[RMDB]
RNA sequence: GGGAACGACUCGAGUAGAGUCGAAAAGAAAAGGAGGAGGAGAAAUAUAGCGCGCGCUCGGUCCUCCCACGCGCGGCGCGCGCUGAUAACCGCGCGCGGAGGAUGAUUAAUAGAUAGCGCGCAAAAACAAUAACAACUACUUCGGUAGUUGUUAUUGAAAAGAAACAACAACAACAAC
Reactivity to 2A3 in 0.01 (KOAc 150mM, MgCl2 10mM, bicine 150mM(pH8.5), 24C), signal-to-noise 2, nucleotides 027 to 126: g010a000a070a020a000g010g030a010g030g010a030g050g040a050g080a080a210a030u230a050u110a080g080c050g010c010g010c000g000c040u020c060g070g020u010c000c000u010c020c010c010a030c020g020c000g020c000g030g000c060g040c020g000c080g030c080u040g000a010u020a030a030c020c020g020c000g000c000g010c010g040g010a020g040g000a000u050g010a060u100u290a110a060u070a090g100a070u050a030g010c000g000c000g000c000a050a000a000a000a010
Reactivity to DMS in 0.01 (KOAc 150mM, MgCl2 10mM, bicine 150mM(pH8.5), 24C), signal-to-noise 4, nucleotides 027 to 126: g000a080a050a100a070g010g010a040g010g000a040g020g000a070g000a090a090a100u000a100u010a160g020c070g010c020g030c010g020c100u010c050g020g020u000c010c010u000c010c010c040a040c060g000c020g000c020g020g000c100g010c100g020c120g000c060u000g000a060u010a120a100c040c020g020c000g040c000g030c300g000g000a020g010g010a030u010g000a100u000u010a070a080u000a090g000a110u000a080g000c000g010c010g020c020a010a020a030a040a050